[RMDB]
RNA sequence: GGGAACGACUCGAGUAGAGUCGAAAAAUAGUGUUAUUCGUAACACUAUAUAUCCGUACUCAAGGAUUCGUUCCAGAGACAUGCAUGCUAGCAUGAAAGCAACUGAACAAGCGUUCGCGCUUGUUAACUAGACAGGUCCAUUCGUGGACCUGUCUAGAAAAGAAACAACAACAACAAC
Reactivity to DMS in 0.01 (KOAc 150mM, MgCl2 10mM, bicine 150mM(pH8.5), 24C), signal-to-noise 2, nucleotides 027 to 126: a050u000a000g000u000g020u000u010a010u000u000c180g030u000a000a000c000a030c000u010a000u000a100u000a090u000c100c090g040u000a000c010u000c000a060a120g010g000a070u010u000c030g010u000u000c010c000a090g040a270g020a180c020a000u000g000c000a050u000g000c190u010a140g010c010a020u000g010a060a150a120g000c150a030a070c130u000g010a030a020c040a020a010g010c020g030u000u000c300g020c010g000c000u000u000g010u010u010a030a130
Reactivity to 2A3 in 0.01 (KOAc 150mM, MgCl2 10mM, bicine 150mM(pH8.5), 24C), signal-to-noise 1, nucleotides 027 to 126: a010u000a000g000u030g020u020u000a020u050u060c270g040u020a030a030c000a000c000u020a000u000a000u000a000u000c040c030g010u060a010c000u010c030a010a000g120g000a070u000u040c020g000u020u030c000c000a000g050a020g010a070c020a000u040g040c000a010u150g160c070u140a040g020c010a010u000g090a090a010a000g080c070a050a090c050u110g020a020a000c050a030a010g010c010g040u080u110c250g040c010g000c070u000u000g000u000u010a000a040